Source information
An RNA of 207 nucleotides, treated with 2A3 and read out base by base. The data come from the RNA Mapping Database (RMDB), library OK3TST. Reactivities are rounded to 0.1 and cut off at 0 and 3. The 2A3 profile rests on 746 reads. The reactions ran in a buffer of 150 mM KOAc, 10 mM MgCl2 and 150 mM bicine (pH 8.5), at 24 C. 2A3 adducts were read by reverse transcription with SuperScript II with manganese.
RNA sequence: GGGAACGACUCGAGUAGAGUCGAAAAAGCGACGCGCUCAUCGACAUCGUGCGCGCGGCGCUCGAAGGCGUGCGCCCGCAAACCGACCAAGUGAUCGUGCAGAGCGCGCAAGUCGUGCCGUAUGCGAUCCGCGCGACGCUGCGCUUCUUCUCCGGCCUGGCUAAAUUGUGUUCGCACAAUUUAGCCAAAAAGAAACAACAACAACAAC
Reactivity to 2A3 in 0.01 (KOAc 150mM, MgCl2 10mM, bicine 150mM(pH8.5), 24C), signal-to-noise 1, nucleotides 027 to 156: a000g030c010g040a030c000g000c010g060c030u060c010a100u060c090g110a110c010a040u030c050g050u090g060c030g000c000g050c030g030g010c010g020c000u010c010g150a170a080g100g000c030g060u060g020c030g020c040c070c000g050c030a030a080a040c010c010g050a010c000c070a160a070g030u020g240a110u020c000g020u010g110c100a030g040a000g030c000g000c000g000c030a000a150g100u120c000g020u010g000c060c010g010u060a050u170g030c050g040a030u040c000c020g000c000g000c060g000a010c000g000c050u050g050c060g000c000u080u040c000u010u010c060u020c030c020g080g000c000c040